[RMDB]
RNA sequence: GGGAACGACUCGAGUAGAGUCGAAAAUCCGGUUGGUUCGCCAACCGGAAAAUUUAAAUGGGCGAGCGGCACCGCCCGCCAAAAGACGCGGAAAAGCGUCAAAAACUUAGCAGUUCGCUGCUAAGAACGGAUAUAUACCGUUCGCGGUAUAUAUCCGAAAAGAAACAACAACAACAAC
Reactivity to DMS in 0.01 (KOAc 150mM, MgCl2 10mM, bicine 150mM(pH8.5), 24C), signal-to-noise 2, nucleotides 027 to 126: u000c000c000g020g000u010u000g000g040u000u030c220g020c000c000a000a010c000c000g040g000a000a000a000a070u010u020u010a070a110a060u030g010g020g020c030g020a050g010c020g000g000c190a090c200c010g000c000c000c000g040c030c030a070a090a100a090g010a010c000g010c000g020g000a070a090a130a180g020c000g010u000c000a030a060a060a110a140c000u000u000a000g010c000a030g000u000u000c160g050c000u000g010c000u000a000a010g010a070a180
Reactivity to 2A3 in 0.01 (KOAc 150mM, MgCl2 10mM, bicine 150mM(pH8.5), 24C), signal-to-noise 2, nucleotides 027 to 126: u010c000c000g000g020u000u000g010g040u030u040c100g010c080c000a000a020c000c010g020g020a000a020a000a000u030u030u020a000a030a020u060g040g020g010c000g010a020g030c040g160g030c090a050c180c040g000c010c000c000g000c000c000a000a000a000a050g000a010c010g000c060g200g020a060a130a030a070g000c000g000u030c020a040a020a000a010a000c000u000u010a000g010c010a020g010u060u110c150g040c090u000g000c000u010a000a000g010a040a020
Structure probing data (DMS and 2A3) for a 177-nucleotide construct. The RNA was probed in 150 mM KOAc, 10 mM MgCl2 and 150 mM bicine (pH 8.5) at 24 C. It was measured as part of the RMDB library M2PK50.